[RMDB]
RNA sequence: GGGAACGACUCGAGUAGAGUCGAAAACGGACGGGAUUUUAGCCCGGUUGCACGUUUACCCAUUUCGUGCUGGGUCCUGGACCCAUUUAAGAUGAUAGAAAUAUUAUCGAUUUCUUUACCGUCCGGAACGCUAUUACUCGUUCGCGAGUAAUAGCGUAAAAGAAACAACAACAACAAC
Reactivity to DMS in 0.01 (KOAc 150mM, MgCl2 10mM, bicine 150mM(pH8.5), 24C), signal-to-noise 3, nucleotides 027 to 126: c010g020g010a020c000g000g010g020a140u020u010u000u010a140g020c040c020c010g000g010u010u000g000c020a020c000g030u000u000u000a130c080c050c110a150u000u010u010c020g050u000g010c010u000g000g000g000u010c030c170u010g000g000a060c010c010c020a040u000u020u010a080a180g000a010u010g000a010u000a020g000a140a060a140u000a010u010u000a010u000c010g000a190u000u000u000c070u000u000u000a170c020c010g010u010c000c010g000g010a110
Reactivity to 2A3 in 0.01 (KOAc 150mM, MgCl2 10mM, bicine 150mM(pH8.5), 24C), signal-to-noise 2, nucleotides 027 to 126: c010g000g000a000c000g000g010g070a090u020u040u090u300a070g050c050c040c000g030g030u040u120g000c010a000c010g010u030u080u090a130c000c010c000a020u050u060u060c020g000u000g000c020u050g030g010g010u030c010c200u110g110g070a000c000c000c000a000u040u020u000a080a060g000a020u030g010a000u010a030g030a010a010a010u020a020u050u010a040u010c000g010a010u030u150u000c060u030u100u070a050c010c000g000u000c000c000g010g000a020